An RNA of 177 nucleotides, treated with 2A3 and DMS and read out base by base. Values cover nucleotides 27 to 126. DMS adducts were read by reverse transcription with MarathonRT. The data come from the RNA Mapping Database (RMDB), libraries RFM100 and RFMREP.
[RMDB]
RNA sequence: GGGAACGACUCGAGUAGAGUCGAAAAUUGCCUGUAAGUCAGAUAAGGCGAACAGCAAGGAUACCUGCUGUUUUCUGAAUCUUGGAGAUAUUCUUAUCAGAGAUAGGUCCAAAAGACUUUCUGCCAGGUCAACUAAACGGUUCGCCGUUUAGUUGACAAAAGAAACAACAACAACAAC
Reactivity to 2A3 in 0.01 (KOAc 150mM, MgCl2 10mM, bicine 150mM(pH8.5), 24C), signal-to-noise 4, nucleotides 027 to 126: u090u090g100c000c000u000g030u060a030a030g050u010c010a010g010a040u050a080a010g000g020c000g000a010a000c000a000g000c030a070a200g070g080a130u250a300c010c010u000g000c000u010g000u030u000u010u000c010u010g030a020a040u020c000u010u050g070g000a090g010a050u090a070u160u000c040u050u110a160u170c080a050g010a000g010a090u030a040g120g110u000c000c000a040a080a010a010g010a000c000u000u010u020c020u070g090c050c040a100g000
Reactivity to DMS in 0.01 (KOAc 150mM, MgCl2 10mM, bicine 150mM(pH8.5), 24C), signal-to-noise 3, nucleotides 027 to 126: u020u060g030c070c000u000g000u000a010a030g010u000c020a100g010a030u010a070a240g000g000c030g000a010a020c020a010g040c000a010a060g000g020a230u030a100c070c040u000g020c010u010g010u000u000u000u030c020u000g000a140a020u000c010u000u010g040g020a060g010a040u010a040u010u020c110u020u000a100u020c120a110g000a010g000a050u000a010g000g000u000c000c000a020a060a120a220g000a000c010u010u010u010c010u010g000c080c230a080g000